[RMDB]
RNA sequence: GGGAACGACUCGAGUAGAGUCGAAAAACGAGGACGUGAUCAAAAACCUUUUUCAACAACUAAUCAAUUUCACCGUUCAAUCAGAAUUUGCACGACUUCAAUCUCCAGAUGUCAACGGUUUAGGAGAGUAAUCACCCGAUUUCGAUCGGGUGAUUACAAAAGAAACAACAACAACAAC
Reactivity to DMS in 0.01 (KOAc 150mM, MgCl2 10mM, bicine 150mM(pH8.5), 24C), signal-to-noise 1, nucleotides 027 to 126: a100c090g030a100g020g000a040c060g040u000g000a190u000c180a070a060a120a060a010c070c010u020u000u000u000u010c120a030a030c130a100a140c080u030a030a070u030c070a070a200u010u010u010c050a170c020c040g030u000u000c030a060a080u000c040a060g020a110a080u030u000u000g040c020a000c070g000a110c090u000u020c020a020a090u000c030u000c010c000a090g050a010u000g020u040c190a070a040c030g000g000u000u010u010a020g030g000a240g000a180
Reactivity to 2A3 in 0.01 (KOAc 150mM, MgCl2 10mM, bicine 150mM(pH8.5), 24C), signal-to-noise 1, nucleotides 027 to 126: a020c020g000a000g080g000a020c000g040u040g020a050u140c100a000a030a030a090a100c010c020u000u030u130u080u100c020a050a030c010a020a010c040u160a120a090u120c060a080a110u020u060u120c100a090c050c010g040u040u060c060a070a040u010c000a020g080a140a160u010u100u130g060c010a010c030g060a030c030u000u060c050a080a130u040c000u000c010c000a040g010a110u080g030u060c030a040a020c080g030g040u000u040u090a020g030g000a040g000a000